[RMDB]
RNA sequence: GGGAACGACUCGAGUAGAGUCGAAAAUCUGAAGCAGACGCGCAAAGGAGCUUUGAGGCCACCCGAAACGCGUUUAUCCUGUGGAUGGGCUACCUGUCGUAUCUUGUCGCCCAAAGUCGUCGCGAGACACCUUCCUGCACUUCGGUGCAGGAAGGUGAAAAGAAACAACAACAACAAC
Reactivity to 2A3 in 0.01 (KOAc 150mM, MgCl2 10mM, bicine 150mM(pH8.5), 24C), signal-to-noise 2, nucleotides 027 to 126: u090c020u020g030a020a000g020c030a010g020a030c010g000c050g000c060a130a010a060g020g000a020g010c110u100u070u130g180a200g020g100c020c060a160c060c080c020g060a050a010a040c000g000c000g060u010u010u050a100u030c040c030u070g000u020g040g010a100u070g020g020g000c020u020a030c020c000u000g090u120c070g000u050a150u120c040u000u050g060u040c070g030c030c000c000a040a050a000g020u030c030g000u000c010g000c040g090a060g000a070
Reactivity to DMS in 0.01 (KOAc 150mM, MgCl2 10mM, bicine 150mM(pH8.5), 24C), signal-to-noise 1, nucleotides 027 to 126: u010c000u000g010a110a020g000c100a060g000a090c000g030c010g030c010a050a180a150g000g000a300g010c000u000u000u040g000a110g000g010c030c000a040c000c070c000g000a120a150a140c050g050c090g090u000u050u040a030u040c060c050u000g010u030g000g010a140u000g040g010g020c010u000a070c010c000u030g000u010c080g000u010a070u090c090u020u000g000u020c050g000c000c000c010a040a100a070g010u000c030g030u000c050g000c050g000a120g010a220
This 177-nucleotide RNA was probed chemically with 2A3 and DMS.